The record gives the reactivity of an RNA of 177 nucleotides to DMS.

RNA sequence: GGGAACGACUCGAGUAGAGUCGAAAAAAGUUUGAGUUGUCGAAAACGUUUGGUUGUAGCCUUGAGUAUCAAAGGCGGUACUGGCAAGCACUUCUAAGAAGUUAUAGUCAAUGGUAAUUGCACCACACAUCGGGAGUAGUUUCGACUACUCCCGAUGAAAAGAAACAACAACAACAAC
Reactivity to DMS in 0.01 (KOAc 150mM, MgCl2 10mM, bicine 150mM(pH8.5), 24C), signal-to-noise 2, nucleotides 027 to 126: a040a060g000u000u010u000g000a300g000u000u000g030u010c020g000a050a090a050a100c080g010u010u000u020g020g010u030u000g000u010a110g020c070c020u000u000g010a190g000u000a110u010c040a130a050a090g010g010c070g000g010u010a020c120u000g000g030c050a040a060g040c100a050c010u000u000c020u010a100a100g010a060a020g000u000u000a060u010a150g010u000c040a050a080u040g010g030u000a060a080u010u000g010c100a110c040c030a070c240a110

Annotation
The RNA was probed in 150 mM KOAc, 10 mM MgCl2 and 150 mM bicine (pH 8.5) at 24 C. The DMS profile rests on 1,302 reads. DMS (dimethyl sulfate) methylates the pairing face of unpaired adenines and cytosines. It was measured as part of the RMDB library OK2TRN.